[RMDB]
RNA sequence: GGGAACGACUCGAGUAGAGUCGAAAACUACGCAAUGAGUUUCCGCCGCUGCGGAUGUCGGUCGGUAACAGAUCCAGCCUUCCGGCCCAGUUCACCACUUUUGUAGGCCGUGACGCACAGAUCAACGCUACUCGACAUAGUUCGCUAUGUCGAGUAGAAAAGAAACAACAACAACAAC
Reactivity to DMS in 0.01 (KOAc 150mM, MgCl2 10mM, bicine 150mM(pH8.5), 24C), signal-to-noise 5, nucleotides 027 to 126: c040u010a060c100g020c110a100a100u010g000a120g010u000u000u000c040c010g020c070c100g000c100u000g010c050g010g010a080u000g010u010c050g020g040u000c030g010g010u000a070a090c120a120g010a060u000c030c100a140g000c040c020u000u000c050c020g000g000c010c030c040a050g000u010u000c100a100c080c050a090c080u010u000u000u000g020u000a090g000g010c030c040g010u010g000a070c300g010c050a070c180a090g000a050u010c040a060a140c270g000
Reactivity to 2A3 in 0.01 (KOAc 150mM, MgCl2 10mM, bicine 150mM(pH8.5), 24C), signal-to-noise 4, nucleotides 027 to 126: c020u110a060c060g000c110a080a210u190g030a070g110u030u050u020c000c010g030c030c020g050c070u110g020c040g140g080a090u070g070u100c020g000g030u040c000g000g050u080a070a020c040a060g040a050u030c030c020a010g010c010c010u060u000c010c000g020g000c000c040c000a020g000u070u080c080a100c110c000a060c030u040u130u080u170g130u130a040g020g010c020c020g060u100g020a020c030g000c010a030c040a050g060a040u040c020a010a080c050g000